[RMDB]
RNA sequence: GGGAACGACUCGAGUAGAGUCGAAAACCCCCAAUUUUCUGCUAAUCCUCUGUAGUCAUGGUGGAAAAGCGUGGGGGGAAAAAGAAAUCUGGGGGAGCUGACGAAGGUACUCAUGAUCAGUGUGACGAACUAGUUAGAGGUUCGCCUCUAACUAGUUAAAAGAAACAACAACAACAAC
Reactivity to DMS in 0.01 (KOAc 150mM, MgCl2 10mM, bicine 150mM(pH8.5), 24C), signal-to-noise 5, nucleotides 027 to 126: c020c000c000c020c020a050a050u000u000u000u010c030u010g020c040u000a080a240u000c030c010u000c060u010g020u010a120g010u010c090a060u000g010g010u010g000g000a030a050a140a040g010c150g020u000g010g010g010g010g010g010a020a040a060a140a030g010a060a060a030u000c090u000g000g010g030g000g010a110g000c050u010g010a060c050g010a130a070g010g010u000a040c070u010c040a040u010g010a090u000c060a040g000u000g010u010g000a110c150g000
Reactivity to 2A3 in 0.01 (KOAc 150mM, MgCl2 10mM, bicine 150mM(pH8.5), 24C), signal-to-noise 3, nucleotides 027 to 126: c010c000c020c000c000a040a050u140u000u000u040c020u030g030c030u100a080a120u050c000c020u040c050u100g120u230a080g120u140c090a050u120g080g020u010g040g060a070a080a020a000g100c110g030u090g000g000g000g010g000g050a070a150a010a030a020g070a020a070a030u080c110u080g020g000g000g010g000a030g020c020u030g010a050c020g030a040a030g080g030u060a040c020u060c060a020u070g050a140u090c030a020g020u070g070u060g170a020c050g010